[RMDB]
RNA sequence: GGGAACGACUCGAGUAGAGUCGAAAAUAAAUUCACAAUAUUAUAUACCAUUAGCCCGGGCGCUGUUCUUCUCAUUUUUGAAUUUAUGAAAAGUAAGUUGGCACCACCUUUUCCCAAUUCCCAUAUCAAGACGUCAAGAAUUCGUUCUUGACGUCUUAAAAGAAACAACAACAACAAC
Reactivity to DMS in 0.01 (KOAc 150mM, MgCl2 10mM, bicine 150mM(pH8.5), 24C), signal-to-noise 2, nucleotides 027 to 126: u020a010a040a100u010u000c010a100c080a100a120u090a060u020u090a100u010a160u020a170c070c030a140u000u020a130g010c010c030c100g000g000g020c110g020c040u000g010u020u000c050u000u010c060u010c050a050u010u050u030u000u000g000a070a010u020u000u020a050u020g020a030a070a030a070g000u000a030a080g010u020u010g010g000c050a020c060c010a020c040c000u000u070u000u000c000c030c010a020a240u020u010c000c000c000a070u040a050u060c200
Reactivity to 2A3 in 0.01 (KOAc 150mM, MgCl2 10mM, bicine 150mM(pH8.5), 24C), signal-to-noise 2, nucleotides 027 to 126: u030a020a020a020u060u030c000a010c030a060a100u070a080u300u130a150u130a060u050a080c000c020a060u030u140a040g050c000c000c000g060g010g000c010g000c020u060g030u060u000c000u070u000c010u000c000a060u020u010u080u090u140g030a050a040u000u040u090a030u040g020a000a060a000a000g060u060a080a000g030u060u070g040g000c020a000c020c000a020c000c020u000u050u030u050c020c000c000a020a030u030u000c000c010c000a040u060a030u290c030
Structure probing data (DMS and 2A3) for a 177-nucleotide construct. The reactions ran in a buffer of 150 mM KOAc, 10 mM MgCl2 and 150 mM bicine (pH 8.5), at 24 C. For 2A3 the reverse transcriptase was SuperScript II with manganese. The data come from the RNA Mapping Database (RMDB), library RFM100.